RNA sequence: GGGAACGACUCGAGUAGAGUCGAAAACACAGAAUCUUCGGAUUCUGUGAAAGGAACAAUAACAUGCAAAAGUUCCAAAAAGCAUGAAGGACAAAAGUCCAAAAACACAUCGCUUCGGCGAUGUGAAGUCUAUGACACAGUUCGCUGUGUCAUAGACAAAAGAAACAACAACAACAAC
Reactivity to DMS in 0.01 (KOAc 150mM, MgCl2 10mM, bicine 150mM(pH8.5), 24C), signal-to-noise 2, nucleotides 027 to 126: c010a010c000a020g040a000a000u000c000u000u020c270g060g030a010u000u000c000u000g040u000g040a020a080a100g000g010a050a070c110a100a100u020a100a210c010a020u000g010c000a040a160a140a150g010u000u010c040c060a070a020a120a170a140g000c000a040u000g000a160a090g010g000a010c010a050a120a130a120g000u000c000c040a040a040a030a150a110c010a000c000a020u000c020g000c000u000u000c180g010g010c040g020a000u000g050u000g000a050a100